[RMDB]
Structure probing data (2A3) for a 207-nucleotide construct. Conditions: 150 mM KOAc, 10 mM MgCl2 and 150 mM bicine (pH 8.5), 24 C. Source: RMDB library M2RFPK, as collected in RNAgym.

RNA sequence: GGGAACGACUCGAGUAGAGUCGAAAAGCCGCGGCAAGUGGAGUUAGCGAGAAGAGACUAGGCUUUGGUUUCUUCAAGUGAAGCGGUCACCAAUCAGGUGUGCUAGUUACCGUAAAAAAUCCGGAUUAAUGCCUCAGCGCGUUCGCGCGCUGAGGAAGCAGCAUACUAACUUCGGUUAGUAUGCUGCAAAAGAAACAACAACAACAAC
Reactivity to 2A3 in 0.01 (KOAc 150mM, MgCl2 10mM, bicine 150mM(pH8.5), 24C), signal-to-noise 1, nucleotides 027 to 156: g060c040c000g010c000g000g040c040a050a070g030u040g060g050a050g010u230u110a050g010c040g020a010g000a040a020g060a000g030a010c000u060a040g040g090c030u140u090u090g000g000u000u000u010c000u090u030c000a040a020g030u000g020a070a030g000c040g060g120u040c000a010c000c000a030a160u150c090a010g010g130u070g020u040g090c010u080a090g080u160u080a070c040c000g040u130a160a110a000a080a000a000u090c030c000g040g010a070u110u230a150a070u160g060c000c000u000c000a000g000c040g000c000g040u040u100c190g000c000g000c000g000c080u000g000a000g010g000a000a000